[RMDB]
RNA sequence: GGGAACGACUCGAGUAGAGUCGAAAACUCGCGCGAACAUCGAGGCGUGGAGCGCGACAUGAAUCAGCCUCCAUUAGAUUAAUGGUCGACAGAUCAGCGGCGAUCAGCGACCAAAUUAGAAGCCGCCACCGGAAGAGGAGACGCUCGACGGACGUCACCCAGUGAUAGCUUUCGAGCUAUCACUGGGAAAAGAAACAACAACAACAAC
Reactivity to 2A3 in 0.01 (KOAc 150mM, MgCl2 10mM, bicine 150mM(pH8.5), 24C), signal-to-noise 1, nucleotides 027 to 156: c050u020c030g000c000g000c040g060a300a010c040a030u100c000g000a020g000g030c030g000u000g000g050a100g000c000g000c000g000a010c010a190u300g170a280a080u160c010a000g000c000c020u000c020c000a140u180u130a040g090a110u080u260a100a130u100g010g000u000c000g020a030c010a170g050a000u010c000a020g060c000g040g000c010g000a030u000c060a000g000c000g090a000c000c040a000a000a040u140u090a000g000a080a000g020c000c000g110c010c000a050c000c020g020g020a060a000g040a040g000g080a110g000a140c160g020c170u000c000g000a000c000g010g020a020c020g000u030c000a040